[RMDB]
RNA sequence: GGGAACGACUCGAGUAGAGUCGAAAAGAAAUUUGCUGAACUGAAAAAAGACUUUGAUGGCAUCGAAGUCGAAGAUGAAGAAAAUGUUAAAGAAUACUAUGAGAUUGAGCAGGCUAUCAAAGGUUACCAACCUGUACUCAUUCGUGAGUACAGGUUGAAAAGAAACAACAACAACAAC
Reactivity to DMS in 0.01 (KOAc 150mM, MgCl2 10mM, bicine 150mM(pH8.5), 24C), signal-to-noise 4, nucleotides 027 to 126: g020a080a120a090u000u000u010g020c080u010g000a120a090c090u000g000a010a070a060a110a110a090g000a070c000u000u010u000g000a010u000g000g010c030a300u000c030g010a140a040g000u000c000g020a110a060g000a090u000g010a130a120g000a100a070a080a070u010g010u000u000a070a060a120g010a120a100u010a070c080u000a100u000g010a270g000a060u000u000g010a240g020c200a050g000g020c040u000a020u000c030a020a050a040g010g000u000u000a070c240
Reactivity to 2A3 in 0.01 (KOAc 150mM, MgCl2 10mM, bicine 150mM(pH8.5), 24C), signal-to-noise 2, nucleotides 027 to 126: g040a010a070a010u160u100u100g030c050u030g020a140a030c010u040g070a090a100a030a030a030a000g060a050c020u000u000u000g000a010u000g050g000c030a040u050c020g000a050a000g000u020c030g040a000a000g060a030u140g000a040a120g070a060a060a010a010u110g020u130u140a140a090a020g050a040a070u130a100c070u090a050u170g060a060g000a070u040u020g000a000g020c060a010g100g000c010u000a000u080c000a010a000a000g070g020u080u060a010c130
The record gives the reactivity of an RNA of 177 nucleotides to DMS and 2A3. The RNA was probed in 150 mM KOAc, 10 mM MgCl2 and 150 mM bicine (pH 8.5) at 24 C. The DMS profile rests on 2,961 reads. It was measured as part of the RMDB library OK2TST.